[RMDB]
RNA sequence: GGGAACGACUCGAGUAGAGUCGAAAACACGACUCCUGAUCUCUAGUUAGGGCGCGUUACCCCUACGCCAUGAGAGGACUCAUGAACGCAGAAGUUAACCUGAAUUCGAUUUCAGCUCAAUAAUCAACGUGGUCGUAAUGUUCGCAUUACGACCACGAAAAGAAACAACAACAACAAC
Reactivity to DMS in 0.01 (KOAc 150mM, MgCl2 10mM, bicine 150mM(pH8.5), 24C), signal-to-noise 1, nucleotides 027 to 126: c130a060c070g020a080c000u000c000c100u010g000a040u000c100u000c130u030a070g010u000u000a060g000g030g000c010g050c000g010u000u000a290c010c000c000c030u000a000c040g010c100c070a000u000g020a020g010a300g090g000a230c040u000c000a000u020g000a060a130c180g010c030a100g000a080a150g020u000u040a030a050c210c010u010g000a010a130u000u010c210g000a150u000u000u000c000a120g020c040u000c160a080a060u000a000a060u060c100a060a180
Reactivity to 2A3 in 0.01 (KOAc 150mM, MgCl2 10mM, bicine 150mM(pH8.5), 24C), signal-to-noise 1, nucleotides 027 to 126: c030a000c020g090a060c010u020c110c000u080g060a060u000c120u010c020u140a040g060u060u030a020g050g020g000c020g010c070g070u040u070a230c020c000c000c010u020a010c040g040c010c050a060u020g000a000g030a050g190g200a230c020u000c010a020u060g030a030a070c030g000c060a040g030a180a010g070u120u110a010a030c000c030u050g000a050a020u180u130c050g200a240u070u030u010c010a000g000c010u050c080a100a200u130a190a080u090c080a010a100